[RMDB]
RNA sequence: GGGAACGACUCGAGUAGAGUCGAAAAGAACUCGCACGUGCGACCGAUCGUCGCGUCAAGGGCAACAUCGGCUGGGCGUUCUGUUACAACGGGAUCGCGAUCCCGCUUGCCGUAACCGGACUGCUCAACUCACCACCCUGUUCGCAGGGUGGUGAGUAAAAGAAACAACAACAACAAC
Reactivity to 2A3 in 0.01 (KOAc 150mM, MgCl2 10mM, bicine 150mM(pH8.5), 24C), signal-to-noise 1, nucleotides 027 to 126: g040a030a000c010u010c060g100c030a050c070g090u090g070c000g010a070c070c050g020a170u090c070g000u020c010g020c010g070u050c060a070a110g110g060g000c030a060a030c010a110u030c040g050g000c040u050g000g000g000c010g000u000u000c010u050g030u000u000a010c000a050a020c040g020g000g040a000u030c060g000c120g190a020u010c000c000c000g000c030u050u060g130c060c080g020u000a000a000c000c000g000g030a040c060u130g050c010u020c000a000
Reactivity to DMS in 0.01 (KOAc 150mM, MgCl2 10mM, bicine 150mM(pH8.5), 24C), signal-to-noise 1, nucleotides 027 to 126: g000a080a100c010u000c050g010c130a140c180g010u000g010c040g000a030c010c090g000a140u010c170g020u000c030g000c030g030u000c100a000a100g000g030g030c020a070a010c050a110u000c060g000g000c010u010g000g010g000c010g000u000u000c000u010g000u000u000a010c030a100a090c000g000g000g030a030u000c140g000c290g020a070u020c020c000c000g020c110u010u000g040c190c150g000u000a040a020c000c030g020g000a000c030u000g050c000u010c000a060